Chemical mapping of a 177-nucleotide RNA with 2A3 and DMS. High 2A3 reactivity points to a flexible backbone, as in loops and unpaired stretches. The data come from the RNA Mapping Database (RMDB), library RFM100. DMS adducts were read by reverse transcription with MarathonRT.
RNA sequence: GGGAACGACUCGAGUAGAGUCGAAAAGGGGUACGGACCUCAGCUAGAUCAUGGGAGCUGAGUGCAAACUGUUGAUUUCAGUGCAGCUGGCGUGUGGCUGGCUCACUGGAAACAGGUUUGCAUGAGAACAGCCAAACUGGUUCGCCAGUUUGGCUGUAAAAGAAACAACAACAACAAC
Reactivity to 2A3 in 0.01 (KOAc 150mM, MgCl2 10mM, bicine 150mM(pH8.5), 24C), signal-to-noise 4, nucleotides 027 to 126: g030g010g030g020u100a050c060g060g070a050c020c010u050c000a000g000c020u080a030g000a220u110c010a130u170g070g000g020a020g040c010u030g000a020g020u020g000c000a000a000a000c000u010g190u300u110g070a090u060u000u000c000a000g020u000g070c070a000g000c000u020g040g000c040g080u300g100u140g290g000c000u010g000g000c000u000c010a000c010u000g000g010a000a020a010c000a000g000g050u030u000u000g000c000a010u040g020a000g010a030
Reactivity to DMS in 0.01 (KOAc 150mM, MgCl2 10mM, bicine 150mM(pH8.5), 24C), signal-to-noise 1, nucleotides 027 to 126: g020g040g000g000u020a100c120g000g000a290c050c000u000c010a070g000c020u030a020g000a110u040c100a090u010g030g040g030a050g000c000u000g000a060g010u020g000c010a040a000a000c000u000g000u110u000g000a270u000u000u000c000a000g000u000g000c150a000g000c000u000g030g010c000g030u080g020u100g110g020c000u000g000g000c000u020c000a010c000u000g010g000a000a000a010c010a090g000g010u030u000u000g000c000a000u000g000a100g000a130